The record gives the reactivity of an RNA of 177 nucleotides to 2A3 and DMS. The RNA was probed in 150 mM KOAc, 10 mM MgCl2 and 150 mM bicine (pH 8.5) at 24 C.
[RMDB]
RNA sequence: GGGAACGACUCGAGUAGAGUCGAAAAUAACAGCGUUCUGGCGUGAGAACGUCAGGCAACUACCAAUCACUGUAUGGUAGUUGCAUUGUGUGAGAACACAAUGAUGCUGUUUAACAGUGAUUGAUACGAACUUGACGUAUUUCGAUAUGUCAAGUUCAAAAGAAACAACAACAACAAC
Reactivity to 2A3 in 0.01 (KOAc 150mM, MgCl2 10mM, bicine 150mM(pH8.5), 24C), signal-to-noise 9, nucleotides 027 to 126: u070a000a000c000a000g000c000g000u010u000c000u000g000g000c000g000u020g030a090g030a050a010c000g000u000c000a000g000g000c000a000a000c000u000a000c000c000a000a010u060c000a000c000u000g000u010a040u030g000g000u000a000g000u000u000g000c000a000u000u000g000u000g000u010g040a080g030a040a000c000a000c000a000a000u000g000a000u000g000c000u000g000u000u000u010a010a000c000a000g000u000g030a090u070u150g060a050u070a080c070
Reactivity to DMS in 0.01 (KOAc 150mM, MgCl2 10mM, bicine 150mM(pH8.5), 24C), signal-to-noise 8, nucleotides 027 to 126: u030a000a010c000a010g000c000g030u000u000c000u000g000g000c010g000u000g000a250g010a170a010c000g000u000c000a000g010g010c010a000a010c000u000a000c000c000a040a170u000c000a010c000u000g000u000a200u010g000g000u000a000g000u000u000g010c000a010u000u000g010u000g010u010g000a240g000a180a020c000a000c000a000a000u000g000a010u000g010c000u000g010u000u000u010a060a030c000a000g010u000g000a300u030u010g010a100u030a100c210
It was measured as part of the RMDB library OK1LIB. For 2A3, 83,208 sequencing reads were counted. DMS adducts were read by reverse transcription with MarathonRT.